[RMDB]
RNA sequence: GGGAACGACUCGAGUAGAGUCGAAAACGCAAAUUCAAAGUGAGUCCACGAAUGGCGAAUAAGCCAACAUAAGGUGAAUUUGCUAAUAGACUCAGUAGUAGCAUUUAUGUGAAAAUGUCAAAGGAGCAGUUACAUAGAAAUUCGUUUCUAUGUAACUAAAAGAAACAACAACAACAAC
Reactivity to DMS in 0.01 (KOAc 150mM, MgCl2 10mM, bicine 150mM(pH8.5), 24C), signal-to-noise 9, nucleotides 027 to 126: c130g020c100a050a040a060u030u010c080a090a080a140g010u020g000a050g010u000c010c130a160c180g000a080a100u020g010g010c010g000a050a030u020a090a300g010c000c000a070a080c230a110u040a140a090g000g020u000g000a180a040u000u000u000g010c010u000a040a050u020a110g000a050c010u000c000a050g000u010a090g000u010a130g000c020a010u000u000u010a060u050g010u020g000a080a030a030a040u010g000u010c090a060a100a100g000g000a100g010c180
Reactivity to 2A3 in 0.01 (KOAc 150mM, MgCl2 10mM, bicine 150mM(pH8.5), 24C), signal-to-noise 9, nucleotides 027 to 126: c050g010c030a040a060a030u110u060c020a070a050a030g130u060g050a030g040u030c040c030a070c090g140a130a150u070g000g000c010g020a030a060u140a140a020g000c000c010a060a050c050a180u220a090a100g020g000u030g030a040a070u010u000u000g000c000u010a030a050u070a060g020a030c000u000c030a020g040u110a010g000u040a010g070c010a020u000u040u070a150u210g190u070g110a060a050a030a040u070g060u110c080a060a060a070g080g020a070g060c030